[RMDB]
RNA sequence: GGGAACGACUCGAGUAGAGUCGAAAAGCUGUCCGCUGCCAGGGGUCCGGCCACGGUCGCGGAGUCCCCGGGCGACCAUCGGGCAGCACCCGGGGUCGGUGGGCCGGUGCCCGCCCCGGCAAUGCCGAGUUCUAUAGUGUUUCGACACUAUAGAACUAAAAGAAACAACAACAACAAC
Reactivity to DMS in 0.01 (KOAc 150mM, MgCl2 10mM, bicine 150mM(pH8.5), 24C), signal-to-noise 6, nucleotides 027 to 126: g000c010u000g020u000c010c020g010c240u010g010c010c010a120g020g010g010g010u010c030c040g020g010c020c070a100c180g030g010u000c070g010c080g010g010a130g010u000c010c000c000c020g000g010g010c060g010a090c180c130a120u010c030g010g010g000c010a030g010c010a030c060c000c000g010g010g000g020u000c160g010g020u000g020g000g000c000c030g010g010u000g010c040c020c070g000c030c020c030c010g010g000c100a050a060u010g000c050c030g010
Reactivity to 2A3 in 0.01 (KOAc 150mM, MgCl2 10mM, bicine 150mM(pH8.5), 24C), signal-to-noise 4, nucleotides 027 to 126: g000c010u000g010u010c000c020g020c170u140g000c000c040a100g000g030g000g010u040c070c020g040g010c040c020a090c130g110g010u120c080g050c100g300g060a090g100u090c000c000c000c000g000g030g000c020g040a040c030c020a080u160c030g010g000g010c000a000g000c000a020c010c010c000g030g000g000g000u060c070g040g160u120g040g040g000c040c050g090g050u090g010c010c020c010g030c010c010c000c020g010g010c030a050a100u170g020c030c050g070